[RMDB]
RNA sequence: GGGAACGACUCGAGUAGAGUCGAAAACUGCAAAAAAUAACACUUCUUACGCUCUAGCUGCCUAAAAACCAGCAGGCGUGACCCGAUUUGGAUUGCUCGUGUUCAAUGACAGGUCUUAUUAUUAGCGAGAUACGAUUAAGCCUUGUCUAGCGGCUUGCCACUACUGAUGCUUCGGCAUCAGUAGUGGAAAAGAAACAACAACAACAAC
Reactivity to 2A3 in 0.01 (KOAc 150mM, MgCl2 10mM, bicine 150mM(pH8.5), 24C), signal-to-noise 2, nucleotides 027 to 156: c030u100g000c030a020a020a020a020a060a090u300a230a070c120a050c110u300u300c040u090u140a020c040g020c000u110c030u240a160g000c000u000g010c000c000u030a050a050a000a000a000c000c000a000g020c020a020g020g000c000g000u000g000a000c030c000c010g000a020u000u000u000g010g000a000u020u050g010c030u020c030g030u020g000u020u030c020a030a010u020g010a040c010a030g020g040u000c090u100u010a120u120u020a090u040u140a050g030c000g000a010g010a020u050a100c070g010a070u110u050a030a000g030c000c000u070u140g120u100c050u040a040g090c020g040g000c000u000u070g030
Background:
An RNA of 207 nucleotides, treated with 2A3 and read out base by base. Reactivities are given for positions 27 through 156. 2A3 adducts were read by reverse transcription with SuperScript II with manganese.